This 177-nucleotide RNA was probed chemically with 2A3 and DMS. Values cover nucleotides 27 to 126.
RNA sequence: GGGAACGACUCGAGUAGAGUCGAAAAGCUUCUCGGAUGGACUCGUAUCACUAGUUCUCACGGCGACGCGUACCUCAGGGAGCUGUAUACCCAUCUCCGACGCGACCUGCCUAAUACCAUGGAGAGGUGGAUGACGACAAUUCGUUGUCGUCAUCCAAAAAGAAACAACAACAACAAC
Reactivity to 2A3 in 0.01 (KOAc 150mM, MgCl2 10mM, bicine 150mM(pH8.5), 24C), signal-to-noise 2, nucleotides 027 to 126: g030c030u020u070c070u120c120g020g060a120u130g060g070a120c010u100c080g010u070a080u160c110a040c100u070a070g060u170u000c060u000c100a050c050g040g060c030g030a040c020g090c020g040u070a190c030c040u010c050a040g030g050g000a030g000c030u000g090u070a140u080a020c030c010c010a100u010c030u020c010c020g050a060c050g040c000g000a150c010c010u050g050c000c000u160a110a040u130a190c010c040a050u120g040g020a060g000a020g140g010
Reactivity to DMS in 0.01 (KOAc 150mM, MgCl2 10mM, bicine 150mM(pH8.5), 24C), signal-to-noise 2, nucleotides 027 to 126: g010c060u000u000c000u000c040g020g000a060u010g020g010a130c040u000c060g000u000a060u010c110a100c030u010a100g020u010u000c070u000c100a090c120g060g000c060g010a060c010g020c040g000u000a080c040c020u010c070a150g020g000g010a070g010c020u010g010u000a130u030a060c070c020c000a070u020c040u000c000c010g000a090c090g020c040g000a150c070c000u000g040c040c020u000a060a050u010a100c110c070a080u000g000g010a060g010a070g010g030
Source information: For DMS, 1,598 sequencing reads were counted. The RNA was probed in 150 mM KOAc, 10 mM MgCl2 and 150 mM bicine (pH 8.5) at 24 C. For 2A3 the reverse transcriptase was SuperScript II with manganese. The 2A3 profile rests on 1,194 reads. DMS adducts were read by reverse transcription with MarathonRT.